[RMDB]
RNA sequence: GGGAACGACUCGAGUAGAGUCGAAAAUUAAAGAAUUGUCGUUGGGAUGCUACGCAAUUAAAUACAUGUGUGACGUGAAUUUGCGAACGACGUAAUUCAAUAGCAGAAAGAUCAAAAGAUCAAAAAACGACAUCAAAUGAUUCGUCAUUUGAUGUCGAAAAGAAACAACAACAACAAC
Reactivity to DMS in 0.01 (KOAc 150mM, MgCl2 10mM, bicine 150mM(pH8.5), 24C), signal-to-noise 1, nucleotides 027 to 126: u020u040a060a120a280g000a050a020u000u010g020u000c010g010u000u000g030g030g020a080u020g000c050u000a060c000g000c020a020a060u020u000a030a090a120u020a150c070a010u000g000u020g020u000g010a080c050g120u000g000a100a070u000u010u020g000c000g000a120a080c050g010a050c010g000u000a020a020u010u000c060a030a100u000a020g000c070a060g010a200a060a050g010a020u000c000a030a120a090a170g000a010u020c030a010a010a000a110a100a250
Reactivity to 2A3 in 0.01 (KOAc 150mM, MgCl2 10mM, bicine 150mM(pH8.5), 24C), signal-to-noise 1, nucleotides 027 to 126: u080u050a070a050a010g010a030a030u050u030g020u010c010g020u030u000g150g130g050a060u110g030c000u040a000c010g010c000a010a000u150u130a060a240a060u180a050c010a030u040g100u020g060u120g100a070c010g030u030g000a040a030u100u090u040g000c000g000a040a010c010g030a000c000g000u020a010a000u000u140c000a020a040u010a010g000c050a010g220a110a140a030g030a030u000c040a030a180a300a050g030a030u000c000a000a080a030a000a010a080
The record gives the reactivity of an RNA of 177 nucleotides to DMS and 2A3. Conditions: 150 mM KOAc, 10 mM MgCl2 and 150 mM bicine (pH 8.5), 24 C. High 2A3 reactivity points to a flexible backbone, as in loops and unpaired stretches. It was measured as part of the RMDB library M2PK90.